[RMDB]
RNA sequence: GGGAACGACUCGAGUAGAGUCGAAAACCAGAGCAGAGAACAACAGUAGAAGUAUGCUGAAAAAGUUAGUAUGAGAAGUUUGAAUUGUUUAGAUAAUAUAAAAGUGACAUCUAAUAUGACUAAUAUAUGUUAUGGAGAUAUUCGUAUCUCCAUAACAAAAAGAAACAACAACAACAAC
Reactivity to 2A3 in 0.01 (KOAc 150mM, MgCl2 10mM, bicine 150mM(pH8.5), 24C), signal-to-noise 2, nucleotides 027 to 126: c000c000a000g000a030g010c010a020g000a000g000a020a080c030a020a000c010a020g070u070a000g040a160a000g070u150a020u100g010c000u010g080a020a060a170a170a000g020u110u070a050g040u090a020u100g060a080g000a090a100g120u110u050u120g150a070a050u030u000g020u010u020u020a010g010a020u120a300a000u070a150u080a160a100a090a040g110u060g070a040c000a070u030c000u000a050a000u160a100u130g060a000c000u010a020a020u120a000u000a110
Reactivity to DMS in 0.01 (KOAc 150mM, MgCl2 10mM, bicine 150mM(pH8.5), 24C), signal-to-noise 4, nucleotides 027 to 126: c020c000a130g010a140g020c060a050g000a180g020a080a040c060a050a100c060a060g030u010a080g010a100a090g010u030a060u000g000c000u000g000a060a070a110a080a090g020u000u000a030g030u000a040u010g000a070g000a060a100g000u000u000u000g000a160a110u000u000g000u000u000u000a030g000a080u020a070a080u030a070u010a040a040a080a080g000u020g000a090c110a040u010c050u020a050a050u030a060u010g000a060c040u000a040a140u010a060u010a060
The record gives the reactivity of an RNA of 177 nucleotides to 2A3 and DMS. The RNA was probed in 150 mM KOAc, 10 mM MgCl2 and 150 mM bicine (pH 8.5) at 24 C.